[RMDB]
The record gives the reactivity of an RNA of 177 nucleotides to DMS and 2A3. The reactions ran in a buffer of 150 mM KOAc, 10 mM MgCl2 and 150 mM bicine (pH 8.5), at 24 C. The data come from the RNA Mapping Database (RMDB), libraries RFM100 and RFMREP. High DMS reactivity at an A or C suggests that its Watson-Crick edge is free.
RNA sequence: GGGAACGACUCGAGUAGAGUCGAAAAGAGGACAGCAUGGAGGGUGAUACUCCCGUUCAUCCCUGAGUUGCUCGUGCGUACGAUCCGUUUUCUUUGAGUCGCGUUGUUUGGGAAUGCAGCGCAAAGUCCAGACUAUACGAUUCGUCGUAUAGUCUGGAAAAGAAACAACAACAACAAC
Reactivity to DMS in 0.01 (KOAc 150mM, MgCl2 10mM, bicine 150mM(pH8.5), 24C), signal-to-noise 2, nucleotides 027 to 126: g000a050g020g010a060c120a110g040c130a050u020g000g000a070g020g000g070u020g010a060u000a040c110u010c030c010c060g000u000u000c050a060u010c000c010c050u000g000a120g010u000u000g010c060u000c060g000u000g000c050g020u000a060c110g020a070u010c040c030g010u010u000u010u010c010u000u000u000g010a100g020u010c140g010c060g020u010u000g050u010u000u000g030g030g000a100a080u000g000c020a020g030c010g000c040a050a040a120g000u000
Reactivity to 2A3 in 0.01 (KOAc 150mM, MgCl2 10mM, bicine 150mM(pH8.5), 24C), signal-to-noise 9, nucleotides 027 to 126: g110a020g020g020a020c010a020g040c020a040u080g070g040a040g030g040g010u030g010a030u070a120c050u050c010c010c000g020u020u020c020a070u070c000c000c020u070g060a110g060u090u080g050c020u020c050g040u050g030c030g030u070a060c050g050a100u030c030c020g030u020u030u050u040c020u030u070u120g130a130g050u170c060g010c010g010u010u020g030u020u060u090g100g020g020a060a050u040g000c000a000g000c000g000c000a010a050a020g050u010